[RMDB]
RNA sequence: GGGAACGACUCGAGUAGAGUCGAAAAUGAAUUAAAGGCAAAACAGAAAUCGGAAUCAAAUGAUGUCAAGAUUAUAUUUGAUGAAGUUGUCUACAAUCAAGAUCACGUUGGUAGCAUCCCUAAGCUUUAUGAAAUUGUAUACAAUGGUAUGGCGAUAAUGGGGAUGAAUAUUCGUAUUCAUCCCCAUAAAAGAAACAACAACAACAAC
Reactivity to 2A3 in 0.01 (KOAc 150mM, MgCl2 10mM, bicine 150mM(pH8.5), 24C), signal-to-noise 2, nucleotides 027 to 156: u060g030a010a050u050u130a130a070a040g070g000c030a010a030a160a030c070a070g110a110a230a050u150c040g060g050a010a010u060c020a010a050a130u130g010a030u130g060u100c100a010a010g010a080u060u100a070u130a050u060u070u050g000a020u010g050a020a010g000u020u000g040u000c000u000a040c050a020a030u100c080a040a100g020a070u020c000a000c090g050u030u040g020g040u030a020g000c020a000u030c020c000c000u010a040a010g000c010u030u150u050a130u040g040a000a050a070u050u070g050u000a030u000a100c020a000a020u050g040g000u040a010u130g050g040c000g010a020u010a080
Reactivity to DMS in 0.01 (KOAc 150mM, MgCl2 10mM, bicine 150mM(pH8.5), 24C), signal-to-noise 3, nucleotides 027 to 156: u010g010a100a130u010u020a060a090a090g040g060c020a060a070a110a160c080a140g000a050a100a090u000c030g010g030a190a060u000c030a060a090a080u000g000a130u000g020u020c110a060a170g040a150u010u000a090u010a110u000u000u010g000a070u000g000a080a160g010u000u000g030u000c010u010a090c080a060a110u000c060a010a120g010a050u010c070a090c030g020u000u000g000g040u000a080g030c050a080u000c030c000c020u010a100a120g010c080u010u000u000a070u010g000a040a040a040u000u000g010u000a100u010a060c070a020a080u020g010g000u000a060u000g010g010c050g010a070u010a080
Source information:
Structure probing data (2A3 and DMS) for a 207-nucleotide construct. For 2A3, 742 sequencing reads were counted. For 2A3 the reverse transcriptase was SuperScript II with manganese. Source: RMDB library OK3TST, as collected in RNAgym.